[RMDB]
RNA sequence: GGGAACGACUCGAGUAGAGUCGAAAAGGGGUCAAGACUUCUGAGGCCAGGACAUGAGCUGAAGCCUCCACGGCUCAACAGCCUGGCUACCCACCAGAAGUACCUUGACGGAGGCACCCAAAAGAGACCGAGAUGUCUUCGGACAUCUCGGUCUCAACGUCUGUACGUAGUUCGCUACGUACAGACGAAAAGAAACAACAACAACAAC
Reactivity to 2A3 in 0.01 (KOAc 150mM, MgCl2 10mM, bicine 150mM(pH8.5), 24C), signal-to-noise 1, nucleotides 027 to 156: g110g000g030g000u010c000a000a000g020a010c000u000u000c000u010g020a030g040g000c010c000a000g020g000a050c100a240u300g000a010g010c000u010g000a100a010g020c000c010u040c000c000a020c070g020g000c010u000c010a060a110c030a030g140c010c000u010g000g040c010u000a000c020c030c000a040c000c010a000g010a000a000g010u040a100c070c030u010u010g010a020c010g000g000a000g000g000c000a040c020c000c010a000a100a010a110g040a000g000a000c000c020g000a000g010a010u020g020u040c010u060u120c300g030g010a000c000a010u000c000u020c000g000g000u000c000u000c000a000a000